[RMDB]
RNA sequence: GGGAACGACUCGAGUAGAGUCGAAAAUGCCCUGAGGCACUUUGAUCAAAAUAGCGAAGUGCUUAAGGCUAUCUUAGUGAAGUAUGGUUGCUGUGAUGUUACCUACUUUGAAAAUAAACUCUGGUUUGAAACUGGGAGUUCGCUCCCAGUAAAAGAAACAACAACAACAAC
Reactivity to 2A3 in 0.01 (KOAc 150mM, MgCl2 10mM, bicine 150mM(pH8.5), 24C), signal-to-noise 8, nucleotides 027 to 129: u130g000c000c000c020u030g070a080g000g000c000a010c000u000u040u020g050a120u230c190a110a140a130a130u120a030g060c010g000a000a030g000u000g010c000u000u030a000a010g000g000c000u060a080u060c050u040u160a110g000u100g170a040a000g010u030a020u280g010g020u020u020g010c020u000g080u130g250a110u160g030u040u030a010c010c000u000a010c010u010u030u030g100a090a080a020a020u240a030a050a010c050u070c070u130g070g100u080u120u090g120a140a090
Reactivity to DMS in 0.01 (KOAc 150mM, MgCl2 10mM, bicine 150mM(pH8.5), 24C), signal-to-noise 5, nucleotides 027 to 129: u040g030c050c010c060u000g000a110g030g040c010a000c000u040u010u000g030a100u050c210a140a120a140a150u080a150g030c000g000a040a050g020u000g020c010u010u010a090a070g000g000c020u040a100u020c080u000u040a020g020u000g030a000a050g000u040a050u080g030g010u040u010g030c020u030g040u010g050a120u060g000u010u030a050c020c020u010a000c020u060u000u070g010a100a040a090a070u060a070a050a020c080u030c100u050g000g020u000u000u000g050a120a120